[RMDB]
RNA sequence: GGGAACGACUCGAGUAGAGUCGAAAAGGUGGCUCCUGGAGGCCUCUCCCUACGGGCGUAGGGGAGUCACCGAUUUAGCAUGUUCGUCCUACUUUAGGAGCGCCUACGCUGUAGGACGUUCAUGCGAGGGUAGCAUUACCUUCGGGUAGUGCUACCCAAAAGAAACAACAACAACAAC
Reactivity to 2A3 in 0.01 (KOAc 150mM, MgCl2 10mM, bicine 150mM(pH8.5), 24C), signal-to-noise 9, nucleotides 027 to 126: g000g000u000g000g000c000u000c000c000u050g100g110a100g100g060c010c010u030c080u060c020c010c000u030a080c120g010g000g030c070g080u160a100g010g050g000g000a000g000u000c000a000c000c000g000a000u010u010u040a020g000c000a000u000g000u000u010c000g000u000c000c000u000a030c020u130u130u120a110g090g050a110g080c070g180c030c050u110a100c110g040c090u050g000u000a000g000g000a000c000g000u000u000c000a000u000g000c000g000a080
Reactivity to DMS in 0.01 (KOAc 150mM, MgCl2 10mM, bicine 150mM(pH8.5), 24C), signal-to-noise 6, nucleotides 027 to 126: g020g010u000g000g000c000u000c000c010u000g000g010a190g010g000c010c010u000c120u020c050c020c050u000a090c240g000g000g010c010g020u010a300g000g000g000g000a010g010u000c000a010c010c000g010a040u030u020u010a110g020c000a010u000g000u010u000c000g010u000c000c000u000a010c010u010u020u020a120g000g010a160g020c140g000c060c030u010a060c220g030c060u000g010u000a000g000g010a010c010g000u000u000c000a000u000g000c000g020a100